[RMDB]
RNA sequence: GGGAACGACUCGAGUAGAGUCGAAAAGCAACAUAGAUCGUUCUAUUAACGAACACGCGCGGAUCGUCGGAGGUCGGCGAGCCCACGGACGUACUUGAUCGCGCGAACGAGUAAAAAUCGCCGGCAAUCAGUUUAGCAGAUUCGUCUGCUAAACUGAAAAAGAAACAACAACAACAAC
Reactivity to 2A3 in 0.01 (KOAc 150mM, MgCl2 10mM, bicine 150mM(pH8.5), 24C), signal-to-noise 2, nucleotides 027 to 126: g010c010a020a080c020a110u200a080g120a160u090c060g030u010u010c050u070a270u220u170a070a060c070g010a020a020c070a020c100g000c030g000c060g030g070a140u090c010g050u010c010g100g120a100g080g040u010c010g000g000c000g010a030g070c000c020c020a020c000g050g000a020c020g010u070a050c030u120u300g050a120u190c000g000c020g000c000g050a030a000c030g020a020g070u060a010a070a030a010a050u020c010g000c000c000g000g000c010a010a080
Reactivity to DMS in 0.01 (KOAc 150mM, MgCl2 10mM, bicine 150mM(pH8.5), 24C), signal-to-noise 2, nucleotides 027 to 126: g010c100a100a030c120a120u020a050g020a070u000c020g010u000u000c070u000a300u000u010a070a090c190g000a050a110c040a160c020g020c010g020c040g000g020a100u000c000g020u000c040g020g000a030g050g020u000c040g000g010c010g040a030g000c040c000c010a110c120g010g010a060c020g010u000a120c070u010u010g000a050u010c030g020c000g000c020g000a050a060c110g000a090g010u010a040a030a050a030a120u000c000g010c010c020g000g020c080a160a100